[RMDB]
Chemical mapping of a 207-nucleotide RNA with 2A3. The RNA was probed in 150 mM KOAc, 10 mM MgCl2 and 150 mM bicine (pH 8.5) at 24 C. For 2A3, 527 sequencing reads were counted. The data come from the RNA Mapping Database (RMDB), library OK3TST. For 2A3 the reverse transcriptase was SuperScript II with manganese.
RNA sequence: GGGAACGACUCGAGUAGAGUCGAAAAGUAAACCUGCCAUUUAGUUGGAAAAUGAUAUACGAGGUUAAACAACACUGGCCUACAAAUGAUAGAGACAUACCAGCAUUCAGCGUUAAGAAUUGGCUUCGUGUUUGCCUUUAUUUACACAAUUUUAACGACUCACAAUGUGGUUCGCCACAUUGUGAGUAAAAGAAACAACAACAACAAC
Reactivity to 2A3 in 0.01 (KOAc 150mM, MgCl2 10mM, bicine 150mM(pH8.5), 24C), signal-to-noise 1, nucleotides 027 to 156: g110u100a010a030a070c010c060u050g030c010c020a100u080u080u080a110g060u050u040g020g070a080a000a050a070u100g020a050u020a000u040a100c140g040a010g030g000u110u210a080a010a010c060a000a000c000a010c030u050g000g000c000c000u040a050c030a120a080a070u170g020a010u140a070g100a000g050a000c010a040u090a080c000c070a030g050c000a010u030u140c030a100g080c150g020u080u030a050a080g000a040a150u120u140g040g000c000u040u030c000g000u000g000u000u140u000g010c000c000u090u070u000a150u000u140u100a050c030a000c000a080a100u160u100u140u250a160a100c060g020